The record gives the reactivity of an RNA of 177 nucleotides to 2A3 and DMS.
RNA sequence: GGGAACGACUCGAGUAGAGUCGAAAAUAUUUUAGUGUACGUCGCUAGCUACAGCGAAGUUGAUAAUCUCAGCAAAGGGUUAGUGGAAAAGGGUCACAAAGUCACGAAAGUGGACGGUAGGACCAUGACCUUGAAGCUCAUUCGUGAGCUUCAAGGUAAAAGAAACAACAACAACAAC
Reactivity to 2A3 in 0.01 (KOAc 150mM, MgCl2 10mM, bicine 150mM(pH8.5), 24C), signal-to-noise 2, nucleotides 027 to 126: u300a180u110u080u050u120a150g020u090g070u170a050c010g020u020c000g090c000u000a030g010c000u130a190c070a010g060c100g020a170a050g040u080u000g090a090u040a190a070u110c010u030c000a010g000c010a070a120a030g000g000g000u070u030a010g010u080g020g020a000a010a150a050g080g000g000u100c110a100c090a200a030a000g020u000c000a030c040g240a110a050a000g100u090g140g020a150c000g000g070u080a000g020g000a000c000c010a000u020g000
Reactivity to DMS in 0.01 (KOAc 150mM, MgCl2 10mM, bicine 150mM(pH8.5), 24C), signal-to-noise 2, nucleotides 027 to 126: u060a020u030u030u050u020a070g020u010g020u030a020c140g020u010c010g000c030u000a000g000c030u000a040c100a070g000c090g000a080a140g040u020u030g000a070u000a140a140u020c200u020c020a160g000c000a030a140a040g000g010g000u010u050a010g030u000g030g000a160a050a130a030g000g000g010u000c030a090c060a040a230a150g070u020c000a030c000g030a060a060a090g010u020g000g000a090c030g030g000u050a300g030g010a090c000c000a050u020g020
Source: RMDB library OK1LIB, as collected in RNAgym. For 2A3 the reverse transcriptase was SuperScript II with manganese. The reactions ran in a buffer of 150 mM KOAc, 10 mM MgCl2 and 150 mM bicine (pH 8.5), at 24 C. For DMS the reverse transcriptase was MarathonRT. Values cover nucleotides 27 to 126.